Structure probing data (2A3 and DMS) for a 207-nucleotide construct. For DMS the reverse transcriptase was MarathonRT. The reactions ran in a buffer of 150 mM KOAc, 10 mM MgCl2 and 150 mM bicine (pH 8.5), at 24 C.

[RMDB]
RNA sequence: GGGAACGACUCGAGUAGAGUCGAAAAGUGUGUCAUUGAAAUUCCAACAGCAAGUGGCACUAACUUUCGGGCAGUUGGAAUUCCUGGAAGUGACUCAGUGCUGCUAAUCUAAGUACUGGGAGAUCGGUGCAACUUAGAUUAGCAGUUGUACCGAGUACGUGAGGACUCUGUUCGCAGAGUCCUUACGAAAAGAAACAACAACAACAAC
Reactivity to 2A3 in 0.01 (KOAc 150mM, MgCl2 10mM, bicine 150mM(pH8.5), 24C), signal-to-noise 6, nucleotides 027 to 156: g130u070g000u000g000u020c000a030u060u100g100a100a080a060u170u070c050c030a060a050c040a100g100c050a100a040g050u030g020g000c000a000c030u060a090a030c010u020u060u050c010g020g000g000c060a120g030u060u100g050g080a110a110u090u050c010c010u020g000g030a010a030g020u030g040a010c010u010c050a010g020u010g030c000u000g000c000u010a000a000u010c000u000a000a010g020u020a050c020u030g020g080g060a190g030a090u130c030g020g020u060g070c050a040a010c010u000u000a010g000a030u030u000a000g010c000a000g000u010u010g000u010a020c020c020g000a010g020u050a070
Reactivity to DMS in 0.01 (KOAc 150mM, MgCl2 10mM, bicine 150mM(pH8.5), 24C), signal-to-noise 3, nucleotides 027 to 156: g040u000g020u000g010u000c010a100u010u000g000a060a070a120u010u000c060c040a090a120c060a120g000c040a100a070g020u010g010g020c010a060c090u010a060a050c040u000u010u000c040g010g010g030c080a110g030u000u010g010g000a090a120u000u000c010c000u010g000g020a110a100g020u000g010a120c000u000c020a030g040u000g000c000u000g020c010u000a040a050u000c030u000a010a030g020u000a050c020u020g030g010g020a260g030a110u000c030g010g020u000g020c030a100a040c000u000u000a040g010a090u000u000a020g010c050a020g020u000u000g010u000a050c020c000g010a050g020u000a180